[RMDB]
RNA sequence: GGGAACGACUCGAGUAGAGUCGAAAAGUAUGUAUGGAUAACCAUACGUACAAAUAAUUGCCUCAUGGUGGUGGCUGGGGGCACUCUCAUGGUGGUGGGUGUGGAAAAUAAAGAUCCGAAAGGAUCAGGAUAGCAUGUACUUCGGUACAUGCUAUCCAAAAGAAACAACAACAACAAC
Reactivity to DMS in 0.01 (KOAc 150mM, MgCl2 10mM, bicine 150mM(pH8.5), 24C), signal-to-noise 2, nucleotides 027 to 126: g000u000a000u010g010u000a000u010g000g020a230u080a120a150c000c000a040u000a000c000g010u000a000c000a060a100a110u010a120a050u010u010g010c000c000u010c180a170u000g000g000u010g000g030u030g000g000c190u020g030g020g000g010g000c070a030c080u010c030u030c150a060u020g000g010u030g010g000u000g000g000g000u010g000u080g000g020a100a010a030a020u050a090a050a100g010a020u000c000c000g000a030a100a230g000g000a000u000c000a050
Reactivity to 2A3 in 0.01 (KOAc 150mM, MgCl2 10mM, bicine 150mM(pH8.5), 24C), signal-to-noise 3, nucleotides 027 to 126: g000u000a000u030g000u000a000u000g000g060a230u200a300a190c000c000a000u000a000c000g010u000a000c000a000a040a000u150a000a080u170u100g050c020c010u090c060a040u090g060g050u060g040g020u050g030g010c060u020g020g000g000g020g050c010a040c020u020c000u040c030a100u030g030g010u040g000g010u040g050g030g000u090g060u070g030g090a020a010a050a000u300a040a140a010g040a000u030c000c000g030a050a020a000g000g000a000u000c000a000